An RNA of 177 nucleotides, treated with 2A3 and DMS and read out base by base. Source: RMDB libraries RFM100 and RFMREP, as collected in RNAgym. Reactivities are given for positions 27 through 126.

RNA sequence: GGGAACGACUCGAGUAGAGUCGAAAAUUUAUAGAUAACGAUUUGGAUUUUGUAGACGAGGAGGAUAGUGAUCGAAUCAGAUCGGCGGAUGCUAUCCCGGAUGUGGCACAUUCGUUAGCUUAUUAAGUACGAAGGAAGAUUUCGAUCUUCCUUCGUAAAAAGAAACAACAACAACAAC
Reactivity to 2A3 in 0.01 (KOAc 150mM, MgCl2 10mM, bicine 150mM(pH8.5), 24C), signal-to-noise 4, nucleotides 027 to 126: u030u040u000a140u050a010g040a010u010a020a020c010g050a080u060u040u150g060g010a060u010u060u110u290g100u120a080g020a130c030g020a060g100g010a060g030g000a040u020a010g070u050g070a060u030c030g030a080a060u080c040a050g070a120u060c020g010g030c040g110g020a050u140g010c020u010a010u070c010c000c010g020g020a070u130g020u080g060g030c040a010c000a030u000u010c010g000u010u020a000g010c010u090u000a040u110u070a150a030g110
Reactivity to DMS in 0.01 (KOAc 150mM, MgCl2 10mM, bicine 150mM(pH8.5), 24C), signal-to-noise 5, nucleotides 027 to 126: u020u020u020a050u010a030g010a060u000a020a040c030g000a050u010u000u020g020g020a130u020u000u010u020g010u010a110g010a060c040g010a170g000g000a120g010g010a020u000a000g010u000g000a030u010c020g000a100a120u020c200a100g000a050u000c050g000g010c080g000g020a050u010g020c010u000a030u020c010c010c000g010g000a060u010g030u000g010g000c100a100c050a030u000u000c020g010u000u000a030g010c020u010u010a070u020u010a040a070g000

2A3 adducts were read by reverse transcription with SuperScript II with manganese. Conditions: 150 mM KOAc, 10 mM MgCl2 and 150 mM bicine (pH 8.5), 24 C.